[RMDB]
RNA sequence: GGGAACGACUCGAGUAGAGUCGAAAACUGGUACUUUUAUGCAUUACGUCUGGUGCCUCCUUAAACCUGCGUGGUAGAUGGUAUUAAUCCUCUGUCAUAGAUAAAGAAAAUGAGACUCAGUUAUGUAAUUCAGAGAUCAUUUCGAUGAUCUCUGAAUAAAAGAAACAACAACAACAAC
Reactivity to 2A3 in 0.01 (KOAc 150mM, MgCl2 10mM, bicine 150mM(pH8.5), 24C), signal-to-noise 4, nucleotides 027 to 126: c020u040g050g030u130a080c020u020u110u050u070a060u150g060c030a030u050u080a070c040g030u010c060u030g040g000u060g030c000c000u000c000c000u060u090a070a100a060c010c000u040g030c030g030u030g000g000u010a010g010a070u180g030g010u070a100u120u180a120a120u110c000c010u020c020u010g040u010c010a030u030a070g060a060u150a080a180a010g100a060a100a030a020u080g020a030g000a030c000u000c130a050g010u080u130a090u120g090u060a050
Reactivity to DMS in 0.01 (KOAc 150mM, MgCl2 10mM, bicine 150mM(pH8.5), 24C), signal-to-noise 5, nucleotides 027 to 126: c050u010g000g020u000a060c070u000u010u000u000a060u000g010c090a070u010u010a050c090g010u000c030u000g010g010u000g010c040c020u010c040c050u000u000a060a100a080c100c030u000g010c080g020u000g010g000u000a020g020a040u000g030g010u000a240u010u010a100a130u010c010c010u000c020u010g000u000c020a030u000a070g010a090u000a060a070a080g000a060a050a050a060u000g000a080g000a050c040u010c050a040g000u000u010a060u000g010u000a060